An RNA of 177 nucleotides, treated with 2A3 and DMS and read out base by base. For 2A3 the reverse transcriptase was SuperScript II with manganese. For DMS the reverse transcriptase was MarathonRT.
[RMDB]
RNA sequence: GGGAACGACUCGAGUAGAGUCGAAAAACAAGCUAGCCGGAGGAGCGCCUAGGAACCCGAGCCGGAGCUCAGCGAGCGCAGCCUGCACGCCCGCCUCGCGUCCCGGGGGGGUCCCGCCUCCCACCCCGUGUUUCAGCCUAUUCGUAGGCUGAAACACAAAAGAAACAACAACAACAAC
Reactivity to 2A3 in 0.01 (KOAc 150mM, MgCl2 10mM, bicine 150mM(pH8.5), 24C), signal-to-noise 2, nucleotides 027 to 126: a010c080a070a000g050c020u110a010g010c000c000g030g010a030g010g030a060g040c070g050c030c060u080a080g050g020a060a060c010c020c020g010a030g160c010c000g040g000a020g020c050u040c060a020g010c010g020a010g030c080g000c040a010g020c010c020u120g010c070a010c080g010c000c000c030g010c000c020u010c000g020c000g010u030c000c000c010g000g000g000g000g000g000g000u020c020c020c000g030c000c010u020c000c000c000a080c000c010c020c060
Reactivity to DMS in 0.01 (KOAc 150mM, MgCl2 10mM, bicine 150mM(pH8.5), 24C), signal-to-noise 1, nucleotides 027 to 126: a110c060a070a120g000c050u040a190g000c050c040g000g000a070g010g000a020g030c060g000c020c110u040a110g010g000a040a040c020c130c000g010a210g000c010c000g000g000a220g000c030u000c250a140g070c060g000a020g000c030g020c110a160g040c070c000u000g000c080a300c010g040c000c010c020g000c100c040u000c080g040c060g010u000c000c000c070g060g010g000g000g010g030g000u000c030c030c050g000c000c000u000c030c010c040a240c060c020c000c050